[RMDB]
RNA sequence: GGGAACGACUCGAGUAGAGUCGAAAAGAUCAUGGAGCUGGCCGAUGUGGCGGCGCCGGGGCCGGUGGUCGAGAUCGUCAACGAGCUGCUGCGGCGAUGUGAUUACGUCACCGCGGGGCCGUUCCUACCCGCUGCAUUAGUUCGCUAAUGCAGCGGGAAAAGAAACAACAACAACAAC
Reactivity to 2A3 in 0.01 (KOAc 150mM, MgCl2 10mM, bicine 150mM(pH8.5), 24C), signal-to-noise 1, nucleotides 027 to 126: g000a060u050c120a050u110g000g040a000g000c040u050g000g060c030c050g100a200u240g150u140g050g130c170g060g150c080g000c000c050g100g000g010g000c000c010g030g020u100g010g140u030c000g000a020g000a070u060c000g040u060c030a100a080c020g040a030g060c010u300g010c000u000g050c000g000g010c020g030a010u030g150u030g130a300u180u300a000c020g010u010c020a000c070c030g000c010g000g000g000g040c000c000g060u000u000c000c000u010a100
The record gives the reactivity of an RNA of 177 nucleotides to 2A3.
Reactivities are given for positions 27 through 126.